Annotation:
The data come from the RNA Mapping Database (RMDB), library OK1LIB. Structure probing data (2A3) for a 177-nucleotide construct.
[RMDB]
RNA sequence: GGGAACGACUCGAGUAGAGUCGAAAACCAAUGAAUCCAUUGGACGUACAAUCGAAGGCCAAUCAAUCCGAGACAACCUUCAAGCCAAGGACAACAAAUCAACAGAUGUACCAGGAGCAGGACCGAAACGUUCACCCGUCUUCGGACGGGUGAACGUAAAAGAAACAACAACAACAAC
Reactivity to 2A3 in 0.01 (KOAc 150mM, MgCl2 10mM, bicine 150mM(pH8.5), 24C), signal-to-noise 1, nucleotides 027 to 126: c000c010a000a000u170g170a000a140u000c000c000a130u000u220g000g000a100c090g000u150a080c100a030a100u110c000g010a090a050g040g090c000c110a000a000u130c030a010a000u180c020c020g030a000g000a000c000a030a030c000c000u000u000c070a000a000g000c000c000a040a000g000g040a000c000a020a000c040a030a000a150u150c100a000a140c110a130g040a000u170g150u140a060c000c000a000g100g000a000g000c030a010g020g010a000c000c100g150a270a030
Conditions: 150 mM KOAc, 10 mM MgCl2 and 150 mM bicine (pH 8.5), 24 C.
The 2A3 profile rests on 350 reads.